Structure probing data (DMS) for a 207-nucleotide construct. Values are in units of 0.01, from 0 to 300, in steps of 10.

RNA sequence: GGGAACGACUCGAGUAGAGUCGAAAAACGCAUCAUACGUGAUGCGAGAACUACAGUUCCGCUCCUCUAGCACACAGAGGUCAAUUGGGUGCGACCCCCCCCUCUCCCGUGUGUCAACGGGAACCAAAAAAGACCCUUUAGUUCGCUAAAGGGUCAACAAUGCAGCAGAGUUCGCUCUGCUGCAUUGAAAAGAAACAACAACAACAAC
Reactivity to DMS in 0.01 (KOAc 150mM, MgCl2 10mM, bicine 150mM(pH8.5), 24C), signal-to-noise 1, nucleotides 027 to 156: a200c020g010c020a000u000c000a130u010a080c280g060u000g000a000u000g020c000g010a070g010a110a180c040u000a080c060a140g000u000u010c000c030g020c050u010c010c000u000c100u010a100g030c040a050c070a090c100a040g000a020g020g030u010c060a070a110u010u010g040g000g020u000g010c100g000a300c000c000c000c000c000c000c000c000u000c100u000c070c000c020g040u000g000u010g030u000c110a160a040c030g000g030g010a010a060c040c050a000a040a080a030a040a070g000a030c000c000c000u000u000u000a010g020u010u000c300g070c040u000a010a020a010g000g070g000u000c000a000a000